[RMDB]
RNA sequence: GGGAACGACUCGAGUAGAGUCGAAAAGCCACCUGGGGCUUGAUGAUGCAGCUAGUCGACACCACAAACCGACCGAUCUUUGGUUACACGGGCGGACAGCUCAACGCUUUCAACACCAUCGGUGCCGGCUAUUAUAGUCCUUCGGGACUAUAAUAGCAAAAGAAACAACAACAACAAC
Reactivity to 2A3 in 0.01 (KOAc 150mM, MgCl2 10mM, bicine 150mM(pH8.5), 24C), signal-to-noise 3, nucleotides 027 to 126: g000c000c010a020c020c050u090g040g020g000g030c020u040u070g030a040u040g000a010u060g040c030a020g000c030u060a030g020u030c020g020a040c030a050c080c010a030c050a050a070a030c030c020g050a020c020c010g080a110u060c090u080u170u140g020g010u020u020a070c070a020c090g020g000g010c030g040g020a050c030a030g010c040u030c050a060a040c060g000c010u030u170u130c050a070a030c010a020c030c010a040u050c030g020g000u020g060c030c020g070
Reactivity to DMS in 0.01 (KOAc 150mM, MgCl2 10mM, bicine 150mM(pH8.5), 24C), signal-to-noise 5, nucleotides 027 to 126: g010c040c020a100c080c080u010g010g020g030g030c050u020u000g020a080u010g010a080u000g010c070a040g020c040u010a080g030u000c030g020a110c050a090c030c030a070c120a060a090a090c070c050g010a070c050c040g040a050u010c110u010u000u010g010g010u010u010a100c150a130c110g000g000g030c030g000g000a090c100a060g010c030u010c090a090a110c080g010c020u000u000u000c070a070a070c110a070c010c020a030u010c060g010g010u000g000c060c050g000